Structure probing data (DMS) for a 177-nucleotide construct.

[RMDB]
RNA sequence: GGGAACGACUCGAGUAGAGUCGAAAAGAUAUGGAUCACAGGGAGAAGUAAGUAUCGGAAACGAUACCUACUUCGAAGAACUGUGAGUCCUAAGUCAAACGGGACUAGUGUUCGCACUAGUCCCGAACCUGUAUCCGAUCUUCGGAUCGGAUACAGGAAAAGAAACAACAACAACAAC
Reactivity to DMS in 0.01 (KOAc 150mM, MgCl2 10mM, bicine 150mM(pH8.5), 24C), signal-to-noise 1, nucleotides 027 to 126: g000a070u000a300u030g000g010a190u020c000a000c000a030g000g000g010a070g000a000a020g030u000a010a040g010u000a000u000c010g000g000a040a090a110c000g010a000u000a000c000c060u010a000c010u000u000c000g000a030a080g000a160a190c010u000g010u000g000a030g030u000c010c000u000a040a130g010u000c030a050a100a250c000g060g000g000a000c000u000a010g030u000g000u000u000c210g030c000a010c000u000a000g000u000c010c000c000g020a010a000
For DMS, 821 sequencing reads were counted. DMS adducts were read by reverse transcription with MarathonRT.